The record gives the reactivity of an RNA of 177 nucleotides to DMS. Reactivities are given for positions 27 through 126. DMS adducts were read by reverse transcription with MarathonRT. The data come from the RNA Mapping Database (RMDB), library M2PK50.

RNA sequence: GGGAACGACUCGAGUAGAGUCGAAAACGAAUAGAAUUCGUUCUAUUCGAAUGACUGCAAAAAGCAGAGUUGACUGCGCCGAGCAGAAACGGCAAAGGAAAAAGUAGCCCAGAUUCGUCUGGGCUAAGGUAGUAUACCGCUUCGGCGGUAUACUACCAAAAGAAACAACAACAACAAC
Reactivity to DMS in 0.01 (KOAc 150mM, MgCl2 10mM, bicine 150mM(pH8.5), 24C), signal-to-noise 1, nucleotides 027 to 126: c010g000a060a040u000a030g010a000a040u000u000c140g000u000u000c000u000a030u000u000c000g000a090a050u000g010a160c070u020g030c040a020a070a070a110a160g000c000a000g000a160g010u000u030g000a120c010u000g000c300g000c020c040g000a070g000c070a130g000a070a120a090c060g000g000c020a120a210a020g060g000a040a050a020a130a050g000u000a000g020c000c000c000a000g010a020u000u000c180g000u000c000u000g000g010g000c000u000a000a000